This 177-nucleotide RNA was probed chemically with 2A3 and DMS. For 2A3, 962 sequencing reads were counted. The reactions ran in a buffer of 150 mM KOAc, 10 mM MgCl2 and 150 mM bicine (pH 8.5), at 24 C. For DMS, 770 sequencing reads were counted. The data come from the RNA Mapping Database (RMDB), library OK2TST. For DMS the reverse transcriptase was MarathonRT.
RNA sequence: GGGAACGACUCGAGUAGAGUCGAAAAAUCUCCUCAUUCUUUCAUCAUCAUAUGGGGAAAGGUACAUUAUCUCAGGAACCUUAUGUAACAUGGAAGACACGUUUUUGGGUGUUCUCUGAUUUUAGAAGUGUUUGUUACGUUUCGACGUAACAAACACAAAAGAAACAACAACAACAAC
Reactivity to 2A3 in 0.01 (KOAc 150mM, MgCl2 10mM, bicine 150mM(pH8.5), 24C), signal-to-noise 2, nucleotides 027 to 126: a000u020c010u000c030c030u080c000a120u120u000c000u050u010u010c000a000u010c050a020u000c000a020u020a030u070g000g030g030g000a030a000a020g020g020u030a070c060a280u170u280a140u170c070u030c070a010g050g050a070a040c010c010u020u050a010u040g080u030a090a030c020a040u030g000g000a000a000g040a000c040a030c110g050u040u070u050u220u140g030g000g000u030g000u030u030c080u000c020u010g100a130u010u150u130u200a150g050a210a070
Reactivity to DMS in 0.01 (KOAc 150mM, MgCl2 10mM, bicine 150mM(pH8.5), 24C), signal-to-noise 1, nucleotides 027 to 126: a000u000c020u010c050c010u010c090a080u020u010c010u000u030u000c010a020u000c180a300u000c040a020u000a070u010g000g000g000g000a180a070a060g010g000u020a030c150a110u010u030a090u010c030u010c080a030g000g020a300a130c030c000u000u000a020u000g010u000a120a110c200a030u000g010g030a060a000g010a070c230a080c100g010u010u000u000u020u000g010g000g000u000g000u030u000c030u010c020u030g010a190u000u000u010u000a040g010a200a090